RNA sequence: GGGAACGACUCGAGUAGAGUCGAAAAACAUGGAUGGAUUUACAGCCGAGCGGAAGUAUCAUGGGCCAGGUUAUCCGUCCUCUUCGAAGGGUUGGCCUUUACGUGCCGGGAGGAACCGCCGCUUAUCCCGGUAAUGCGUAUUCGUACGCAUUACCGGAAAAGAAACAACAACAACAAC
Reactivity to 2A3 in 0.01 (KOAc 150mM, MgCl2 10mM, bicine 150mM(pH8.5), 24C), signal-to-noise 2, nucleotides 027 to 126: a000c080a030u140g000g000a050u020g010g010a040u050u070u100a070c020a030g040c010c020g030a000g010c040g070g030a080a100g100u170a140u180c020a120u160g030g010g000c020c010a060g120g000u060u030a010u000c010c030g030u040c070c000u010c070u110u100c050g100a120a050g060g000g000u080u180g030g010c010c000u080u060u040a160c150g020u230g020c020c000g010g000g000a020g010g000a020a010c000c010g010c000c000g000c030u040u050a070u140c010
Reactivity to DMS in 0.01 (KOAc 150mM, MgCl2 10mM, bicine 150mM(pH8.5), 24C), signal-to-noise 1, nucleotides 027 to 126: a020c180a000u040g010g040a050u010g050g000a060u000u000u010a110c010a050g030c090c000g000a230g020c100g040g000a020a200g000u000a000u100c110a100u080g000g000g070c030c070a150g080g040u020u000a010u000c050c080g060u090c010c030u000c070u100u010c230g020a040a010g000g000g000u000u040g000g000c000c000u000u000u010a070c120g010u000g010c000c000g000g030g000a050g010g030a170a100c120c080g000c000c050g000c080u040u000a080u000c070

Source: RMDB library OK1LIB, as collected in RNAgym. Structure probing data (2A3 and DMS) for a 177-nucleotide construct. For 2A3 the reverse transcriptase was SuperScript II with manganese. The reactions ran in a buffer of 150 mM KOAc, 10 mM MgCl2 and 150 mM bicine (pH 8.5), at 24 C. DMS adducts were read by reverse transcription with MarathonRT.